[RMDB]
RNA sequence: GGGAACGACUCGAGUAGAGUCGAAAAAGACGUGGUAUCACUUCAGAAGGUUCAAGACUAACAUAUGAAGGAAGUCCAUCUGUGCUUUAUUAACUUCUGGUGCCCAUCCUUGAAGAAAGGCGUAAAACUUCUUCUGUGUAUUCGUACACAGAAGAAGAAAAGAAACAACAACAACAAC
Reactivity to 2A3 in 0.01 (KOAc 150mM, MgCl2 10mM, bicine 150mM(pH8.5), 24C), signal-to-noise 4, nucleotides 027 to 126: a000g070a020c040g020u040g010g000u100a070u190c040a010c090u020u010c010a050g010a140a080g130g030u070u080c120a140a080g070a120c050u030a040a000c020a060u080a040u180g010a020a010g040g020a030a030g050u010c020c000a020u020c100u110g080u090g010c010u110u070u080a140u130u100a160a070c020u070u000c030u110g060g000u040g020c000c010c000a030u020c010c020u040u080g010a040a030g060a090a050a000g070g000c040g030u110a050a090a060a080
Reactivity to DMS in 0.01 (KOAc 150mM, MgCl2 10mM, bicine 150mM(pH8.5), 24C), signal-to-noise 5, nucleotides 027 to 126: a050g010a060c070g030u010g010g020u000a100u000c090a200c010u000u000c020a030g000a150a120g000g000u000u000c150a110a100g010a130c210u010a060a080c040a040u010a130u000g000a050a030g010g020a100a240g000u010c010c020a030u000c120u010g010u000g010c020u000u020u000a070u020u000a080a070c050u000u000c030u000g010g020u000g020c010c020c000a120u000c020c020u000u010g010a080a080g010a090a040a060g010g000c300g000u000a080a070a070a140